[RMDB]
RNA sequence: GGGAACGACUCGAGUAGAGUCGAAAAGAAACCUUAUGCGGGGCCACCAAAGUUUGUCGAUAAGUGGUGGCUUAAACCGGGCAUUCGUGCCGGAAUGAAGAAGUUUUCUGAGUGUACAACCAACAUAGAGGGUCGCGUUCUGUCAUACAGGGAGGCAAUUCUGACUUAUUUUCGAAUAAGUCAGAAUAAAAGAAACAACAACAACAAC
Reactivity to 2A3 in 0.01 (KOAc 150mM, MgCl2 10mM, bicine 150mM(pH8.5), 24C), signal-to-noise 2, nucleotides 027 to 156: g030a050a020a020c000c010u080u070a100u180g040c050g060g050g000g000c000c020a010c040c010a020a000a100g120u100u270u240g100u250c080g080a150u060a120a140g070u020g000g000u070g000g010c020u020u020a000a000a000c000c000g010g030g010c110a070u130u140c130g040u120g040c010c030g000g020a050a070u160g010a030a090g030a020a010g000u130u000u000u060c080u090g010a050g020u090g030u080a080c050a130a070c120c010a020a030c000a020u130a020g050a070g050g020g020u100c070g000c000g060u060u070c020u030g050u000c010a010u020a160c030a000g000g000g040a040g020g070c040a040
Reactivity to DMS in 0.01 (KOAc 150mM, MgCl2 10mM, bicine 150mM(pH8.5), 24C), signal-to-noise 2, nucleotides 027 to 156: g030a170a100a100c030c010u010u000a080u010g010c010g010g010g040g030c000c030a040c020c010a050a120a220g010u000u000u010g020u000c070g020a200u000a080a120g010u000g030g020u000g010g000c010u000u000a010a090a080c010c050g010g010g000c020a150u000u000c130g020u000g020c050c010g020g020a140a090u000g010a140a080g020a020a130g020u000u000u010u010c040u000g020a130g040u000g020u000a060c050a080a120c030c030a030a060c020a110u010a110g010a160g030g020g020u000c060g000c050g000u000u010c050u000g030u000c050a100u000a110c040a070g000g020g000a100g000g030c060a100
Structure probing data (2A3 and DMS) for a 207-nucleotide construct. DMS (dimethyl sulfate) methylates the pairing face of unpaired adenines and cytosines. For 2A3 the reverse transcriptase was SuperScript II with manganese. Conditions: 150 mM KOAc, 10 mM MgCl2 and 150 mM bicine (pH 8.5), 24 C.